[RMDB]
RNA sequence: GGGAACGACUCGAGUAGAGUCGAAAACUGCUGCGCAAUACAAAGUGUGAUGUCCAUGUCUUCGACCCCACGCUGAGCCCAGAAGUCCAGAAGCAAGUCAGCAGCAUCAAAGGCGUCACCCUGCACAACUCCACUCUGUUUUCGAACAGAGUGGAGUAAAAGAAACAACAACAACAAC
Reactivity to 2A3 in 0.01 (KOAc 150mM, MgCl2 10mM, bicine 150mM(pH8.5), 24C), signal-to-noise 1, nucleotides 027 to 126: c050u040g040c000u050g000c070g020c050a040a110u150a200c020a090a120a060g060u070g020u000g080a070u070g060u010c020c000a060u100g010u040c010u010u020c020g110a160c010c020c010c000a000c010g000c020u120g000a030g050c050c000c010a070g040a080a030g060u000c030c040a010g000a090a030g000c040a050a000g040u040c020a000g000c010a010g000c000a020u090c020a020a140a020g020g000c000g000u050c010a040c000c000c000u060g010c030a050c020a050
Reactivity to DMS in 0.01 (KOAc 150mM, MgCl2 10mM, bicine 150mM(pH8.5), 24C), signal-to-noise 2, nucleotides 027 to 126: c030u000g040c010u010g010c070g000c110a060a100u000a080c210a100a090a120g010u000g000u020g000a030u000g000u000c030c020a030u000g000u020c030u000u000c050g020a140c060c000c020c070a050c080g000c060u000g010a100g010c010c010c040a110g010a080a090g000u000c030c040a050g000a080a080g040c070a060a070g020u000c070a040g000c020a030g010c030a040u010c090a020a080a120g000g000c020g000u000c080a070c030c020c020u000g030c100a070c140a100
Structure probing data (2A3 and DMS) for a 177-nucleotide construct. Reactivities are given for positions 27 through 126.